This 177-nucleotide RNA was probed chemically with DMS and 2A3. The reactions ran in a buffer of 150 mM KOAc, 10 mM MgCl2 and 150 mM bicine (pH 8.5), at 24 C. The DMS profile rests on 2,438 reads. Source: RMDB library OK1LIB, as collected in RNAgym. 2A3 adducts were read by reverse transcription with SuperScript II with manganese.
RNA sequence: GGGAACGACUCGAGUAGAGUCGAAAAUAACGGUUAGAUGUCCGCACAACUCCGGACUCGCGGUGAGCGAUACAGCGCAGCGCGAGCAUCGCAGCUGCUGUGCGGACGGCUAGCAAGGGCUAGCCAGCCUGAGGCUGAUAUUCGUAUCAGCCUCAGGAAAAGAAACAACAACAACAAC
Reactivity to DMS in 0.01 (KOAc 150mM, MgCl2 10mM, bicine 150mM(pH8.5), 24C), signal-to-noise 2, nucleotides 027 to 126: u080a040a130c100g030g000u010u040a050g000a090u050g000u010c000c040g050c010a000c030a050a050c020u000c090c000g000g000a130c020u000c000g000c000g050g000u000g000a010g060c020g000a280u020a100c140a210g000c000g000c000a040g000c000g000c000g000a010g000c060a030u020c030g000c180a180g000c200u000g030c100u000g020u000g050c000g000g000a000c000g000g000c000u000a000g010c030a300a160g010g000g000c010u000a010g000c030c000a060g010
Reactivity to 2A3 in 0.01 (KOAc 150mM, MgCl2 10mM, bicine 150mM(pH8.5), 24C), signal-to-noise 3, nucleotides 027 to 126: u150a020a000c080g040g050u130u150a040g070a190u120g020u000c000c000g050c000a010c000a110a230c020u050c080c000g080g000a050c010u000c000g010c030g040g180u000g000a060g000c020g050a130u170a300c160a120g000c030g010c000a040g100c010g000c010g000a030g030c060a170u080c000g000c010a050g000c000u160g010c000u000g000u000g000c000g010g050a000c010g000g000c000u000a000g010c010a120a300g160g170g000c000u000a020g030c000c030a000g040